RNA sequence: GGGAACGACUCGAGUAGAGUCGAAAAAGCGAACAGGUCGGGUGACUGCUGCAUUAAACAAAAACCUUGAGGAAACUCAUUAUUAUCUUCAAUCUUUGAGAGUCUUAUCGUACGUAGGAGCAAUCAGGGAUACUGAACUUUUCGAAGUUCAGUAUCCAAAAGAAACAACAACAACAAC
Reactivity to DMS in 0.01 (KOAc 150mM, MgCl2 10mM, bicine 150mM(pH8.5), 24C), signal-to-noise 2, nucleotides 027 to 126: a060g030c050g030a050a040c090a100g000g000u010c100g000g010g040u000g000a100c070u000g010c090u010g000c040a090u000u020a110a070a110c050a030a090a030a110a070c060c060u000u000g000a010g000g000a060a050a090c080u000c060a040u000u000a100u010u000a110u020c070u000u010c060a010a070u000c050u000u000u010g000a120g010a100g010u000c000u020u000a070u010c080g020u000a060c130g010u000a070g000g020a100g000c060a060a050u010c030a080g010
Reactivity to 2A3 in 0.01 (KOAc 150mM, MgCl2 10mM, bicine 150mM(pH8.5), 24C), signal-to-noise 2, nucleotides 027 to 126: a010g070c040g030a030a000c010a070g070g030u080c020g030g050g000u060g030a050c030u040g030c020u010g020c010a090u040u170a130a160a010c050a030a110a000a040a030c000c020u050u060g010a000g020g000a060a020a020c000u030c100a010u060u220a070u070u080a040u010c010u110u030c050a070a130u000c040u040u050u120g040a070g000a030g050u000c000u020u060a080u130c020g020u050a020c000g020u020a050g000g040a000g050c030a010a060u100c030a020g000